An RNA of 177 nucleotides, treated with 2A3 and read out base by base. Values cover nucleotides 27 to 126. For 2A3 the reverse transcriptase was SuperScript II with manganese.
RNA sequence: GGGAACGACUCGAGUAGAGUCGAAAAUUAUUUACUGGGUUCGUCCAAAACGGAGUAACCCUUGAAGAAAGCAGGCAGGAUGAACCAAACAUCACUUCAAACUUAAACCAAGAAGUUGUUAAGGGGACCUCGAAAAAAGUUUCGACUUUUUUCGAGGAAAAGAAACAACAACAACAAC
Reactivity to 2A3 in 0.01 (KOAc 150mM, MgCl2 10mM, bicine 150mM(pH8.5), 24C), signal-to-noise 1, nucleotides 027 to 126: u000u030a050u090u140u090a050c050u070g000g000g000u000u000c050g140u030c040c010a070a070a070a060c140g000g000a030g030u010a060a060c000c000c000u000u150g010a010a020g000a040a040a040g000c020a000g010g000c050a030g040g030a090u120g020a060a090c000c170a070a070a040c000a110u070c040a010c050u170u120c000a150a150a000c110u090u120a080a020a000c000c000a040a030g080a150a070g080u000u000g000u000u220a090a020g030g000g000g020a020